[RMDB]
An RNA of 177 nucleotides, treated with 2A3 and DMS and read out base by base. For DMS, 1,545 sequencing reads were counted. 2A3 is a SHAPE reagent: it acylates the 2'-hydroxyl of flexible nucleotides of all four kinds. DMS adducts were read by reverse transcription with MarathonRT. The 2A3 profile rests on 762 reads.

RNA sequence: GGGAACGACUCGAGUAGAGUCGAAAAAAGUCAAUGGCGUUGCUAAAUUGAAAAAGGAUGCUGAGAAAGAUUUCUUAAAAGAUAAAACAAUGCAUUUACAAUUGUUAUUUGGACAAGCAAAUCGUCAUACUACGCUACGGUUCGCCGUAGCGUAGUAAAAAGAAACAACAACAACAAC
Reactivity to 2A3 in 0.01 (KOAc 150mM, MgCl2 10mM, bicine 150mM(pH8.5), 24C), signal-to-noise 2, nucleotides 027 to 126: a000a010g120u080c070a120a000u040g000g000c000g000u000u030g000c000u090a090a070a130u040u060g090a010a040a000a000a020g090g000a020u020g050c000u070g000a000g070a020a110a000g060a060u020u030u020c070u140u100a120a120a120a000g030a030u140a050a130a010a000c100a220a000u100g050c020a060u000u000u150a120c130a080a000u030u000g060u060u040a190u100u040u160g180g000a010c170a170a060g000c010a000a030a020u230c020g000u000c000a000
Reactivity to DMS in 0.01 (KOAc 150mM, MgCl2 10mM, bicine 150mM(pH8.5), 24C), signal-to-noise 1, nucleotides 027 to 126: a180a050g000u060c030a120a010u000g020g000c020g000u000u000g010c010u000a010a130a040u000u000g020a110a160a070a060a050g000g000a000u000g000c000u000g000a300g000a090a060a030g000a100u000u000u000c000u000u000a010a030a080a250g000a010u000a040a020a100a080c040a000a040u000g000c040a050u010u000u020a070c030a090a000u000u000g000u000u000a000u050u000u000g040g000a110c050a070a010g010c130a030a050a080u000c010g010u010c000a140